[RMDB]
Chemical mapping of a 177-nucleotide RNA with DMS and 2A3. Reactivities are rounded to 0.1 and cut off at 0 and 3. The reactions ran in a buffer of 150 mM KOAc, 10 mM MgCl2 and 150 mM bicine (pH 8.5), at 24 C. It was measured as part of the RMDB library OK2TRN. For DMS the reverse transcriptase was MarathonRT. Values cover nucleotides 27 to 126.
RNA sequence: GGGAACGACUCGAGUAGAGUCGAAAAGUAUACAAUCCACAGAGCAAGACAUACAAAUACGUGUCCCGCUCGGAGCAAUAAUGUGCAGCGUCACUGGUAUCUUGAAUAUUAGGACGAAGGACGCUGAGCUAUUGCGGAGAUUCGUCUCCGCAAUAGCAAAAGAAACAACAACAACAAC
Reactivity to DMS in 0.01 (KOAc 150mM, MgCl2 10mM, bicine 150mM(pH8.5), 24C), signal-to-noise 2, nucleotides 027 to 126: g050u010a100u000a050c250a100a150u000c020c020a140c070a230g010a020g000c010a140a050g010a010c000a020u000a180c180a140a160a110u010a070c150g020u000g000u000c020c060c020g030c030u000c010g000g010a210g020c070a110a100u000a110a030u010g060u020g000c000a010g020c010g000u010c000a060c010u000g000g010u000a010u000c020u000u010g030a160a070u000a080u000u010a000g000g030a050c050g030a170a060g000g020a020c050g000c000u010g000a120
Reactivity to 2A3 in 0.01 (KOAc 150mM, MgCl2 10mM, bicine 150mM(pH8.5), 24C), signal-to-noise 2, nucleotides 027 to 126: g080u090a070u020a270c080a020a060u040c020c000a030c060a070g000a000g000c010a020a010g020a020c010a000u130a030c050a080a280a050u210a160c200g000u020g000u000c000c020c000g000c020u000c020g020g020a070g040c080a090a130u150a180a120u190g070u150g080c000a020g000c020g040u030c020a060c300u030g040g030u110a070u100c010u080u140g140a170a050u220a180u200u200a060g000g040a000c030g010a010a000g050g000a010c000g000c000u000g020a010